[RMDB]
RNA sequence: GGGAACGACUCGAGUAGAGUCGAAAAACAAAGCCGCCCCCGGGCGCUCCCCUCGGAGAUGUUCCAGGUGGGUUCACAUCCCCAACCCGCGGGCCGGCUACUCUUCUUUCCCUUCUCUCGUCUUCCUGCAGGCUAGUGUUCGCACUAGCCAAAAGAAACAACAACAACAAC
Reactivity to 2A3 in 0.01 (KOAc 150mM, MgCl2 10mM, bicine 150mM(pH8.5), 24C), signal-to-noise 4, nucleotides 027 to 129: a000c030a000a110a000g010c010c000g000c010c010c000c030c000g000g000g000c010g030c000u040c000c020c000c000u070c120g030g010a050g060a220u150g100u280u040c060c010a040g000g050u060g050g050g020u100u100c110a110c010a150u180c020c000c000c000a020a080c000c020c000g000c040g020g000g000c060c020g000g000c000u020a030c050u040c000u110u000c000u030u030u030c010c000c000u040u000c020u000c000u010c030g050u000c020u010u000c000c000u020g050c010a060
Reactivity to DMS in 0.01 (KOAc 150mM, MgCl2 10mM, bicine 150mM(pH8.5), 24C), signal-to-noise 2, nucleotides 027 to 129: a000c080a140a130a100g040c000c000g050c210c030c000c020c060g000g000g000c070g060c060u030c000c000c010c060u040c120g050g000a060g050a180u030g070u080u020c010c020a080g050g020u000g010g060g000u050u080c100a050c200a210u090c000c000c070c060a220a190c030c070c010g040c300g000g000g060c130c060g020g010c060u040a000c080u030c060u030u000c050u010u060u000c000c020c090u000u070c000u050c010u040c080g050u100c050u090u020c040c050u050g020c140a140
Structure probing data (2A3 and DMS) for a 170-nucleotide construct. For 2A3, 7,429 sequencing reads were counted. Conditions: 150 mM KOAc, 10 mM MgCl2 and 150 mM bicine (pH 8.5), 24 C.